This 177-nucleotide RNA was probed chemically with DMS. Reactivities are rounded to 0.1 and cut off at 0 and 3.
[RMDB]
RNA sequence: GGGAACGACUCGAGUAGAGUCGAAAAAUCUUCCGUUUCAAGUCGGAACCGAUGGAGUCCCCCUUGGGUCCUUCGAAAGCUGAAAGAAGUUGGAAAAAUCGGGCAUCCGGAGAACCUGGAAAUGGACGUAUUUGUUAUCGUUCGCGAUAACAAAUACAAAAGAAACAACAACAACAAC
Reactivity to DMS in 0.01 (KOAc 150mM, MgCl2 10mM, bicine 150mM(pH8.5), 24C), signal-to-noise 1, nucleotides 027 to 126: a070u000c060u000u000c000c010g000u010u000u040c060a070a090g040u010c010g000g020a040a100c020c030g000a010u000g030g030a120g020u000c030c010c020c160c040u040u000g010g000g010u010c070c010u000u000c010g000a120a180a070g000c030u000g000a150a090a130g000a020a090g010u010u000g000g000a050a040a120a170a020u000c020g000g000g000c190a080u010c030c010g010g000a040g000a050a170c150c040u010g030g020a020a020a020u000g040g020a040c300
It was measured as part of the RMDB library VIROID. For DMS, 847 sequencing reads were counted.